[RMDB]
RNA sequence: GGGAACGACUCGAGUAGAGUCGAAAACACAUUCAGGGAGCACAGCUAUCCCUCUGUUCCUCAGAGCUGGGCCUCUCCCACGUGGGUUUGAGAAUUCAGAGGUGACUGAUGGGCCUCUCUGCCAUUAGCGCUCUGGGGGUUGAGUGCCUUGGCUGCAAUUAUAGUCCGUCUUCGGACGGACUAUAAUAAAAGAAACAACAACAACAAC
Reactivity to 2A3 in 0.01 (KOAc 150mM, MgCl2 10mM, bicine 150mM(pH8.5), 24C), signal-to-noise 1, nucleotides 027 to 156: c070a000c000a040u190u190c010a010g030g000g000a020g030c100a020c000a170g000c040u080a060u150c000c040c040u020c010u060g050u110u030c000c000u020c000a030g000a000g000c000u040g010g040g000c010c000u070c040u080c000c020c020a090c180g150u300g060g080g000u090u090u210g080a090g000a080a110u150u080c000a070g000a030g010g050u030g100a100c010u080g020a040u090g030g060g050c030c000u040c000u020c010u030g000c030c000a010u080u100a000g040c000g000c040u010c000u000g010g000g000g060g010u070u040g030a030g010u120g000c010c070u040u040g050g000c010u040g020c050a090